[RMDB]
RNA sequence: GGGAACGACUCGAGUAGAGUCGAAAAGAUAUGGAGGAGGGCGAUAAGAAGUGGCUAUCGGAAACGAUAGAAUCUUCUUUUGACGCCUGACUCCUAAGUCAAAGCACCCGGGUUCGCCCGGGUGCAACAACCUAUCUUAGUUCGCUAAGAUAGGUUGAAAAGAAACAACAACAACAAC
Reactivity to 2A3 in 0.01 (KOAc 150mM, MgCl2 10mM, bicine 150mM(pH8.5), 24C), signal-to-noise 2, nucleotides 027 to 126: g020a040u110a060u140g000g000a010g000g010a030g000g000g020c010g020a020u010a100a010g010a010a000g010u060g150g080c000u000a010u000c000g020g050a100a080a040c000g000a000u010a010g010a010a030u040c020u000u000c010u020u060u030u080g180a080c030g000c000c000u000g010a000c000u020c000c000u000a070a010g000u000c020a170a100a040g020c000a000c000c020c020g020g000g020u050u110c220g160c020c030c080g030g000g000u010g010c010a000a000
Reactivity to DMS in 0.01 (KOAc 150mM, MgCl2 10mM, bicine 150mM(pH8.5), 24C), signal-to-noise 2, nucleotides 027 to 126: g020a030u000a300u010g020g000a030g000g010a300g000g000g000c000g020a110u000a020a000g000a000a000g000u010g000g020c010u000a000u000c000g010g000a160a120a210c010g010a010u000a000g000a080a040u020c000u000u000c000u000u000u020u010g010a180c060g010c000c000u000g000a270c000u000c010c000u000a030a090g000u000c030a080a190a180g010c000a010c010c000c000g020g010g000u000u010c230g020c000c010c000g000g000g010u000g000c000a010a030